[RMDB]
Overview
Source: RMDB library OK1LIB, as collected in RNAgym. This 177-nucleotide RNA was probed chemically with DMS and 2A3. High DMS reactivity at an A or C suggests that its Watson-Crick edge is free. The reactions ran in a buffer of 150 mM KOAc, 10 mM MgCl2 and 150 mM bicine (pH 8.5), at 24 C.
RNA sequence: GGGAACGACUCGAGUAGAGUCGAAAAGAAGCGUAAUCGCAAGUUAGGGAUUGUUGAAGCGGGUGAAUAUCAACCUGACAGAGCGAUCGGCAAUCAAGAAGCUUCCGGCGAACAACGCCUAUAGAAAGGGAUAUAAAUUCUUCGGAAUUUAUAUCCCAAAAGAAACAACAACAACAAC
Reactivity to DMS in 0.01 (KOAc 150mM, MgCl2 10mM, bicine 150mM(pH8.5), 24C), signal-to-noise 5, nucleotides 027 to 126: g010a080a240g010c010g020u000a130a070u000c000g020c030a110a040g000u000u010a130g020g020g010a070u000u000g020u020u000g000a050a170g010c040g000g020g000u010g000a140a120u020a100u040c170a080a060c010c010u000g020a080c120a060g030a220g010c010g020a090u020c040g000g000c030a040a040u000c020a110a110g020a090a130g030c020u010u000c050c160g000g010c000g010a050a020c190a130a050c100g000c000c020u010a100u040a110g000a060a100a040
Reactivity to 2A3 in 0.01 (KOAc 150mM, MgCl2 10mM, bicine 150mM(pH8.5), 24C), signal-to-noise 5, nucleotides 027 to 126: g100a060a010g000c010g010u090a040a070u040c020g010c020a000a090g000u020u050a110g060g000g030a040u040u030g030u010u040g070a060a020g070c020g010g050g020u080g070a150a070u190a070u300c040a050a050c000c010u020g040a030c050a020g200a010g050c040g060a090u050c020g020g000c010a000a040u030c020a030a050g080a080a000g050c020u060u040c040c030g040g000c000g020a040a020c060a010a040c030g020c010c020u080a080u030a160g170a050a040a040